[RMDB]
RNA sequence: GGGAACGACUCGAGUAGAGUCGAAAACCAAUGGGAAACCAUUGGCAACUCGGAAACGAGUUGAAGCGGGAAUUACGAUGGAAACCGCCGACAAUGCGAUUUUAAGCAUUGUCGAUUACGCCCAUGUCGAUUUUAAGACAUGGAGCGAACCAUCGAAGCAUCUUGGUCCGUUCGCGGACUAGGAUGCAAAAGAAACAACAACAACAAC
Reactivity to DMS in 0.01 (KOAc 150mM, MgCl2 10mM, bicine 150mM(pH8.5), 24C), signal-to-noise 1, nucleotides 027 to 156: c000c000a000a000u010g000g000g040a160a130a230c000c000a010u000u010g030g040c020a000a040c010u010c000g010g000a140a100a270c000g020a040g040u000u010g020a070a140g040c000g040g020g000a190a160u010u000a100c030g010a020u000g020g000a080a080a150c060c000g000c110c010g000a040c000a010a020u010g010c010g000a270u000u000u000u000a140a300g000c000a000u010u010g000u000c010g010a090u010u000a090c030g040c020c020c010a010u000g000u000c000g020a290u000u000u010u000a070a300g000a080c000a030u000g000g000a070g000c000g000a110a300c010c020a030u000c000g040a300a300
Reactivity to 2A3 in 0.01 (KOAc 150mM, MgCl2 10mM, bicine 150mM(pH8.5), 24C), signal-to-noise 3, nucleotides 027 to 156: c000c000a000a000u000g000g010g020a060a020a030c000c000a010u000u000g000g000c010a000a000c000u000c000g000g040a080a060a030c000g000a000g000u000u000g010a040a010g000c000g010g010g030a060a090u120u080a090c010g000a010u000g000g000a090a050a020c000c000g000c000c000g000a000c000a000a000u000g010c020g140a180u050u070u110u300a080a000g010c000a000u000u010g000u000c000g000a000u000u010a010c010g010c000c000c000a000u000g000u000c010g030a070u040u070u070u300a160a130g000a000c000a000u000g000g000a240g000c000g010a040a130c010c000a000u000c000g000a090a000